[RMDB]
RNA sequence: GGGAACGACUCGAGUAGAGUCGAAAAGAUAUGGAGCAGGUACUAGCUCAACAGCUUUCUCGGAAACGAGAAAGACAUGAGCUGUACUGCUCCUAAGUCAAAAGACUGUAGGUUCGCCUACAGUCAACGUAUUAACGGAGUUCGCUCCGUUAAUACGAAAAGAAACAACAACAACAAC
Reactivity to 2A3 in 0.01 (KOAc 150mM, MgCl2 10mM, bicine 150mM(pH8.5), 24C), signal-to-noise 4, nucleotides 027 to 126: g030a010u070a030u190g000g000a000g000c020a020g220g090u070a030c100u300a110g020c020u010c020a010a060c040a030g050c010u000u010u000c010u000c010g040g030a100a100a070c010g010a010g010a010a010a000g020a000c020a150u080g000a000g000c010u000g000u010a000c000u010g000c000u000c000c010u000a010a010g020u000c020a000a000a010a170g010a000c000u000g000u000a000g020g090u060u100c300g190c060c000u000a000c000a000g000u010c000a000a010
Reactivity to DMS in 0.01 (KOAc 150mM, MgCl2 10mM, bicine 150mM(pH8.5), 24C), signal-to-noise 7, nucleotides 027 to 126: g010a040u010a300u010g000g010a010g000c000a020g010g020u010a000c010u010a020g020c000u000c000a030a110c300a200g000c000u000u000u000c000u000c000g010g000a130a090a250c010g010a020g000a010a010a010g000a020c100a170u000g000a010g020c000u000g010u010a020c000u000g000c000u000c000c000u000a000a060g010u010c040a110a080a090a090g000a020c000u000g010u000a000g000g010u000u010c300g020c010c000u000a000c000a010g010u000c000a020a070